Chemical mapping of a 207-nucleotide RNA with 2A3. The reactions ran in a buffer of 150 mM KOAc, 10 mM MgCl2 and 150 mM bicine (pH 8.5), at 24 C. It was measured as part of the RMDB library RNAMAK.
RNA sequence: GGGAACGACUCGAGUAGAGUCGAAAAGGGGUCAGGCACGUUGAAACGAUCCAGGAGCAACAGCGUACCUGAAGCCUCCACGGGUACGACAUGCUCCGGAUCGUGGAGUGCCUGACGGAGGCACCCAAAGUGAUUGGUCCUUCGGGACCAAUCACAACCUCCCAUGUCAGUUCGCUGACAUGGGAGGAAAAGAAACAACAACAACAAC
Reactivity to 2A3 in 0.01 (KOAc 150mM, MgCl2 10mM, bicine 150mM(pH8.5), 24C), signal-to-noise 3, nucleotides 027 to 156: g000g010g130g030u020c020a010g000g010c020a010c000g080u190u090g010a000a020a010c030g000a000u040c080c080a240g040g000a030g020c130a060a170c120a200g000c000g000u000a000c000c010u020g030a080a020g010c000c000u010c020c010a000c000g000g000g000u010a010c010g050a040c100a200u300g000c000u010c000c000g010g000a000u000c000g000u010g010g020a020g000u000g000c000c000u000g000a000c000g000g000a000g000g000c000a020c000c000c000a080a060a000g020u010g020a000u010u010g000g000u070c110c170u230u250c300g010g000g000a000c000c000a010a000u010c000a010c000a010a010